[RMDB]
RNA sequence: GGGAACGACUCGAGUAGAGUCGAAAAAAAAAGGACCUACAGCCGAGCGAGUGACUGAAAUCGGCAAAGUCACGAAGCAUCGUUAUACCUAAAUGGUCGUAGCGAAAUAAGAGUUGUUCCCAGUAAAAGUAUCAAUGAACUUCGGUUCAUUGAUACUAAAAGAAACAACAACAACAAC
Reactivity to DMS in 0.01 (KOAc 150mM, MgCl2 10mM, bicine 150mM(pH8.5), 24C), signal-to-noise 2, nucleotides 027 to 126: a020a070a080a130a090g000g010a020c020c010u000a030c020a150g040c140c090g000a140g000c080g020a210g000u000g000a000c010u010g000a020a100a070u010c040g020g000c080a060a080a030g000u000c000a010c000g030a100a160g000c020a160u000c010g030u010u000a000u000a010c000c000u000a050a060a060u030g000g010u000c130g040u000a000g090c010g010a030a090a070u010a050a160g000a000g030u000u000g000u000u000c000c000c000a050g020u030a100a090a060
Reactivity to 2A3 in 0.01 (KOAc 150mM, MgCl2 10mM, bicine 150mM(pH8.5), 24C), signal-to-noise 3, nucleotides 027 to 126: a000a000a010a030a020g110g000a020c010c010u010a000c020a000g060c040c030g130a010g040c070g010a060g030u010g010a000c000u020g080a080a100a190u200c100g060g000c070a040a070a030g000u010c000a000c020g040a050a000g000c010a040u050c000g000u020u000a000u010a010c010c030u150a300a240a200u300g000g000u060c120g020u010a000g000c010g050a100a020a060u150a140a030g000a000g000u000u000g010u000u000c000c010c010a000g000u020a000a020a000